[RMDB]
RNA sequence: GGGAACGACUCGAGUAGAGUCGAAAAGAUAUGGACUACGACUGCUUGGACCCGUAACAUCACUCGGAAACGAGUGUGGGCUAGCAGCCGUAGUCCUAAGUCAAAUCGAGUAGUUCGCUACUCGAAACUUAUUUGCCAGGUUCGCCUGGCAAAUAAGAAAAGAAACAACAACAACAAC
Reactivity to DMS in 0.01 (KOAc 150mM, MgCl2 10mM, bicine 150mM(pH8.5), 24C), signal-to-noise 3, nucleotides 027 to 126: g000a050u000a300u010g010g010a020c000u000a010c010g010a010c000u000g000c020u000u010g050g000a210c000c000c000g020u030a070a130c300a090u030c000a000c000u000c000g000g020a070a100a240c000g010a030g000u000g010u010g000g000g000c010u000a020g010c010a000g000c000c000g040u000a010g010u000c000c000u000a000a050g000u010c030a080a110a150u000c010g000a030g010u000a010g000u000u010c230g010c000u000a000c000u000c010g000a030a040a110
Reactivity to 2A3 in 0.01 (KOAc 150mM, MgCl2 10mM, bicine 150mM(pH8.5), 24C), signal-to-noise 2, nucleotides 027 to 126: g040a010u060a050u130g010g000a000c000u030a000c010g010a010c010u010g080c030u130u200g150g180a300c010c010c020g080u150a080a130c050a230u200c000a020c010u000c000g020g040a090a070a050c030g000a010g000u020g010u030g000g000g020c020u010a010g010c000a000g000c000c000g000u000a000g000u000c000c000u000a000a010g010u000c010a000a010a100u030c000g020a000g010u010a000g000u030u070c300g000c050u000a000c000u010c000g000a070a020a000